[RMDB]
RNA sequence: GGGAACGACUCGAGUAGAGUCGAAAAACCUUUGUGUCUGUUAGUACAUAUUGCAAGCCCUGAUGUUCCCAUUGGGAACUACCAGGGUGAUGACCAAUAUGGAACCCAGACACUCUGGUAAAAGAAUCGAGAGAGGGUUCGCCCUCUCUCGAUUCAACAAGGAAAAGCAGUUCGCUGCUUUUCCUUGAAAAGAAACAACAACAACAAC
Reactivity to DMS in 0.01 (KOAc 150mM, MgCl2 10mM, bicine 150mM(pH8.5), 24C), signal-to-noise 1, nucleotides 027 to 156: a060c030c000u000u010u010g000u010g000u010c000u000g020u000u000a130g030u050a300c020a010u000a030u000u050g020c050a140a300g000c000c020c000u000g000a020u000g000u020u000c000c010c040a300u000u030g090g000g050a040a000c000u010a000c030c020a020g000g020g010u000g010a010u000g000a260c300c000a030a020u000a030u000g020g000a190a200c130c300c010a000g000a020c000a010c010u010c030u000g010g010u000a060a030a130a100g000a010a000u000c010g010a040g000a040g020a010g000g060g010u000u010c300g020c030c000c070u010c000u020c010u000c000g010a000u020u000c010a120a200